[RMDB]
RNA sequence: GGGAACGACUCGAGUAGAGUCGAAAAGAUAUGGAUAGCAGCGCCGAAGAACAGUUUCGGAAACGAAACUGGGAGGACCCGCUUCCCUAUCCUAAGUCAAAGGUCCGAUAGUUCGCUAUCGGACCAACUAAAGAUAUUGGUUCGCCAAUAUCUUUAGAAAAGAAACAACAACAACAAC
Reactivity to DMS in 0.01 (KOAc 150mM, MgCl2 10mM, bicine 150mM(pH8.5), 24C), signal-to-noise 6, nucleotides 027 to 126: g000a040u010a270u000g000g010a020u000a010g080c120a020g020c050g040c110c060g000a080a110g010a270a220c020a000g000u000u000u000c000g010g000a070a060a140c000g000a000a000a000c000u000g000g000g010a120g020g000a130c130c210c040g010c020u000u000c090c150c010u010a010u000c000c010u000a040a130g010u000c050a070a090a150g010g000u000c000c000g000a010u010a010g010u000u010c280g010c010u000a000u000c000g000g010a000c000c000a000a040
Reactivity to 2A3 in 0.01 (KOAc 150mM, MgCl2 10mM, bicine 150mM(pH8.5), 24C), signal-to-noise 4, nucleotides 027 to 126: g010a020u060a010u090g000g000a010u020a030g060c080a000g000c070g060c120c180g210a300a080g010a070a000c010a000g000u010u000u010c000g000g000a040a010a010c000g000a010a000a000c000u020g000g000g020a040g020g130a080c130c070c050g030c020u100u080c060c000c010u000a000u000c000c010u030a040a020g010u030c040a130a110a210g000g000u010c000c000g000a000u010a000g020u060u100c300g000c240u000a000u000c000g000g000a000c000c000a000a000